An RNA of 177 nucleotides, treated with 2A3 and DMS and read out base by base.
It was measured as part of the RMDB library RFM100.
The reactions ran in a buffer of 150 mM KOAc, 10 mM MgCl2 and 150 mM bicine (pH 8.5), at 24 C.
Reactivities are given for positions 27 through 126.
RNA sequence: GGGAACGACUCGAGUAGAGUCGAAAAGAUGUCUUGGGCUGUAAAUGGUCAGGCCGCUUACAAGGGGAGAUCCAAGGCGGCACCCGCGAGGGUGGUUUCAGGUAUGAAAUCGACAGGUACUAAAUCAGUCUAUUGGGCAUUUCGAUGCCCAAUAGACAAAAGAAACAACAACAACAAC
Reactivity to 2A3 in 0.01 (KOAc 150mM, MgCl2 10mM, bicine 150mM(pH8.5), 24C), signal-to-noise 2, nucleotides 027 to 126: g010a010u080g040u000c020u030u020g030g070g000c020u030g030u060a020a040a100u090g050g000u030c010a020g060g000c000c020g000c040u060u120a010c060a120a120g000g000g020g020a050g030a030u050c000c000a000a000g030g000c000g000g000c010a020c000c000c000g020c040g070a050g000g020g000u040g000g000u000u000u030c000a040g030g020u050a090u230g040a020a020a030u070c010g010a040c000a040g070g020u030a050c030u100a060a070a090u150c040a040
Reactivity to DMS in 0.01 (KOAc 150mM, MgCl2 10mM, bicine 150mM(pH8.5), 24C), signal-to-noise 2, nucleotides 027 to 126: g000a110u000g010u000c030u010u000g040g000g060c010u020g020u000a000a030a160u000g000g000u000c060a070g000g000c000c020g010c020u000u010a090c170a060a140g050g000g000g000a140g000a110u020c000c030a080a140g010g000c050g010g000c010a010c020c040c010g000c240g000a240g000g000g030u000g000g000u000u000u000c000a050g110g000u070a060u030g000a010a070a010u020c010g000a090c110a110g010g010u010a020c050u020a040a180a140u000c190a050